Overview
An RNA of 177 nucleotides, treated with 2A3 and DMS and read out base by base. The reactions ran in a buffer of 150 mM KOAc, 10 mM MgCl2 and 150 mM bicine (pH 8.5), at 24 C. 2A3 adducts were read by reverse transcription with SuperScript II with manganese. High 2A3 reactivity points to a flexible backbone, as in loops and unpaired stretches. DMS adducts were read by reverse transcription with MarathonRT.
[RMDB]
RNA sequence: GGGAACGACUCGAGUAGAGUCGAAAAAAAAAGAGCGUACAUCUCUCUCAGACUGAACGACAGUCUGACUCUCUCGUACGCUUGUUCAACGAGAGAGAGAGAGCGUUGGAACAAGUGUGAAAAAAAACAUUCUACCCAUGUUCGCAUGGGUAGAAUGAAAAGAAACAACAACAACAAC
Reactivity to 2A3 in 0.01 (KOAc 150mM, MgCl2 10mM, bicine 150mM(pH8.5), 24C), signal-to-noise 2, nucleotides 027 to 126: a000a000a000a010a020g110a020g020c060g020u080a020c080a210u030c010u000c000u010c010u010c010a010g000a010c000u000g040a300a080c140g200a080c090a000g000u020c000u000g010a010c000u000c000u000c010u010c010g030u040a040c080g010c100u020u030g040u060u040c020a050a000c010g000a030g000a000g030a000g010a000g010a020g000a000g020c020g010u050u140g080g000a030a020c020a020a060g020u030g030u070g150a150a030a030a010a000a000a000a010
Reactivity to DMS in 0.01 (KOAc 150mM, MgCl2 10mM, bicine 150mM(pH8.5), 24C), signal-to-noise 2, nucleotides 027 to 126: a030a030a040a110a110g020a060g000c030g000u000a050c040a170u000c030u000c000u000c040u000c010a000g000a010c000u000g000a100a090c280g000a170c050a000g010u000c000u000g000a090c080u000c000u000c010u000c070g000u010a060c020g010c040u000u000g010u000u000c060a160a080c030g000a060g000a020g000a040g010a050g010a040g000a090g020c210g030u000u000g020g000a020a020c060a030a010g010u010g000u020g000a000a010a000a030a040a040a040a120
The data come from the RNA Mapping Database (RMDB), library M2PK90.